[RMDB]
This 207-nucleotide RNA was probed chemically with 2A3 and DMS. It was measured as part of the RMDB library M2RFPK.
RNA sequence: GGGAACGACUCGAGUAGAGUCGAAAAUGAACGCUUUCGAAGGAAAGCUUGCCCAGCUAAUCUUCUGCAACGCCAUUACGAGGACUGCCCUUAGAGGCUCAUGGCGAUAGGUCACCCCGCCGGUCGGUUAAGAAUCAGCGAUUCGUCGCUGAUUCAAUCUCUUGACUAGUUUCGACUAGUCAAGAGAAAAAGAAACAACAACAACAAC
Reactivity to 2A3 in 0.01 (KOAc 150mM, MgCl2 10mM, bicine 150mM(pH8.5), 24C), signal-to-noise 1, nucleotides 027 to 156: u120g020a100a000c120g010c020u000u020u010c030g140a160a130g080g020a010a030a010g020c000u030u050g040c000c000c000a010g000c040u080a060a080u090c100u120u040c020u030g100c010a070a010c020g010c010c040a030u060u110a060c090g030a040g030g070a060c050u060g010c010c000c000u130u150a070g020a090g190g000c000u000c020a040u020g020g000c000g030a040u070a060g030g000u070c020a080c000c040c010c000g000c010c020g040g040u050c010g000g030u070u070a190a010g000a010a000u000c000a000g000c000g020a010u030u050c200g050u000c000g080c000u000g010a010u000u000c000a000a000
Reactivity to DMS in 0.01 (KOAc 150mM, MgCl2 10mM, bicine 150mM(pH8.5), 24C), signal-to-noise 2, nucleotides 027 to 156: u010g030a100a090c140g020c010u010u000u010c020g010a260a200g000g010a020a080a030g000c010u010u000g010c030c030c020a150g030c100u000a050a070u010c000u000u000c000u010g010c020a100a100c020g010c020c030a100u010u000a090c040g010a120g030g030a070c050u000g010c010c020c020u010u000a140g010a180g030g000c030u000c070a020u000g020g020c020g020a110u000a030g030g000u000c030a110c000c000c000c040g050c020c040g040g010u010c000g000g020u000u000a070a180g010a020a010u000c000a030g010c010g020a050u000u000c300g010u000c020g030c000u000g000a000u000u000c010a050a110
For DMS the reverse transcriptase was MarathonRT. Reactivities are given for positions 27 through 156. For DMS, 3,317 sequencing reads were counted.